The record gives the reactivity of an RNA of 207 nucleotides to 2A3 and DMS. The data come from the RNA Mapping Database (RMDB), library RNAMAK. The RNA was probed in 150 mM KOAc, 10 mM MgCl2 and 150 mM bicine (pH 8.5) at 24 C. The 2A3 profile rests on 5,052 reads.
[RMDB]
RNA sequence: GGGAACGACUCGAGUAGAGUCGAAAAGAGCCGUUCGCGGCUCCGCGUUCCUAAGUCAGCGGGAGUCUGCAAUAAGCGAAGAACUAUCUCGGAAACGAGAUAGGGAGCUUAUGCAGACGAAGAACGCUGAUAUGGAGAUCCUCAGGUUCGCCUGAAAAAUUGGUAAUAGUUUCGACUAUUACCAAUUAAAAGAAACAACAACAACAAC
Reactivity to 2A3 in 0.01 (KOAc 150mM, MgCl2 10mM, bicine 150mM(pH8.5), 24C), signal-to-noise 4, nucleotides 027 to 156: g010a000g010c020c010g050u070u120c300g000c040g130g000c020u010c010c010g060c040g100u080u030c000c000u020a130a020g010u000c010a000g000c000g020g000g020a060g000u010c010u030g000c050a120a300u030a020a000g010c020g180a290a020g020a080a040c000u000a000u000c000u000c000g010g020a050a080a070c010g000a000g000a000u000a000g010g000g010a020g000c000u000u010a000u010g000c010a000g000a000c000g000a000a010g020a010a000c000g000c000u000g000a000u010a040u070g000g010a030g010a090u060c010c030u020c010a010g040g030u030u040c180g090c060c010u020g050a100a050a130
Reactivity to DMS in 0.01 (KOAc 150mM, MgCl2 10mM, bicine 150mM(pH8.5), 24C), signal-to-noise 2, nucleotides 027 to 156: g000a020g060c000c010g050u000u010c160g030c030g050g020c000u010c000c010g040c060g010u010u000c000c000u000a070a230g010u000c010a030g030c020g050g000g000a260g000u000c010u000g020c010a030a120u010a010a020g030c000g020a120a210g020a130a220c000u000a000u000c000u000c000g020g000a230a110a270c010g020a000g040a030u000a010g020g000g010a230g000c000u000u010a010u000g000c010a000g000a010c000g000a070a090g000a120a130c030g020c010u000g000a000u000a110u010g000g010a080g000a080u000c010c030u000c040a110g010g000u010u010c050g020c060c010u000g010a020a060a110